Notes: An RNA of 177 nucleotides, treated with DMS and 2A3 and read out base by base.
RNA sequence: GGGAACGACUCGAGUAGAGUCGAAAAGAUAUGGAGAUGUCCCAGCGAUGAGAUGAAUGGUCGGAAACGACCACAUCGAGCUGGACAUCUCCUAAGUCAAAGAUCGUAUGGUUCGCCAUACGAUCAAGAUUAAGGACUGCUUCGGCAGUCCUUAAUCAAAAGAAACAACAACAACAAC
Reactivity to DMS in 0.01 (KOAc 150mM, MgCl2 10mM, bicine 150mM(pH8.5), 24C), signal-to-noise 1, nucleotides 027 to 126: g000a030u000a020u000g000g000a000g010a000u000g010u000c170c080c110a020g010c020g040a180u020g000a030g000a010u000g000a150a220u000g000g000u000c000g030g000a000a000a040c020g000a010c000c020a030c000a000u000c000g000a030g060c010u000g010g000a010c010a000u000c020u000c000c000u000a000a040g010u000c020a080a100a210g000a010u000c010g040u000a030u000g020g020u010u020c290g020c040c000a010u000a010c010g000a000u000c000a040a030
Reactivity to 2A3 in 0.01 (KOAc 150mM, MgCl2 10mM, bicine 150mM(pH8.5), 24C), signal-to-noise 2, nucleotides 027 to 126: g000a000u010a000u040g010g000a020g010a000u010g050u090c180c300c000a000g020c020g280a300u300g040a030g000a010u010g030a300a250u050g010g010u000c010g020g000a010a010a010c020g000a000c000c000a000c000a010u010c000g040a050g000c010u030g010g010a000c000a000u000c000u000c000c000u000a000a000g000u020c010a110a000a100g010a000u010c010g010u010a010u000g000g030u070u080c260g050c120c000a010u010a000c000g010a020u000c000a000a000
For 2A3, 3,085 sequencing reads were counted.
For 2A3 the reverse transcriptase was SuperScript II with manganese.
It was measured as part of the RMDB library TTRDES.